RNA sequence: GGGAACGACUCGAGUAGAGUCGAAAACUCGAUGCUGUCGUCCAUUCCACUUCGGAGGGAUAUCCCUACGUCCUCGAAAGAGGGCCAGGGGAGAAGGGCAAGGAAAGGUAUCUCGAACAAGAUCCUGACAUCCGAUCGUAUUCGUACGAUCGGAUGUAAAAGAAACAACAACAACAAC
Reactivity to 2A3 in 0.01 (KOAc 150mM, MgCl2 10mM, bicine 150mM(pH8.5), 24C), signal-to-noise 2, nucleotides 027 to 126: c020u040c010g040a100u150g060c030u030g060u150c030g010u000c000c010a060u070u020c000c000a060c080u210u170c150g100g000a050g060g020g010a010u000a030u020c000c000c010u020a040c040g010u030c000c000u000c000g030a080a060a030g000a010g000g000g030c000c030a080g000g020g000g040a010g000a000a020g190g010g000c080a040a050g070g050a150a130a010g010g070u160a050u000c030u030c060g100a110a050c030a080a020g020a040u000c000c020u050g030
Reactivity to DMS in 0.01 (KOAc 150mM, MgCl2 10mM, bicine 150mM(pH8.5), 24C), signal-to-noise 3, nucleotides 027 to 126: c040u000c020g020a170u020g000c050u010g000u000c120g010u000c030c020a080u020u010c030c020a120c150u010u020c130g000g020a070g010g000g000a050u000a110u000c000c000c010u000a260c300g000u000c000c010u000c000g000a090a090a190g000a000g000g000g000c000c260a240g010g020g000g000a010g000a070a060g020g000g010c020a060a080g020g000a060a120a070g010g010u000a020u000c020u000c040g010a120a060c220a090a050g000a010u000c000c010u000g020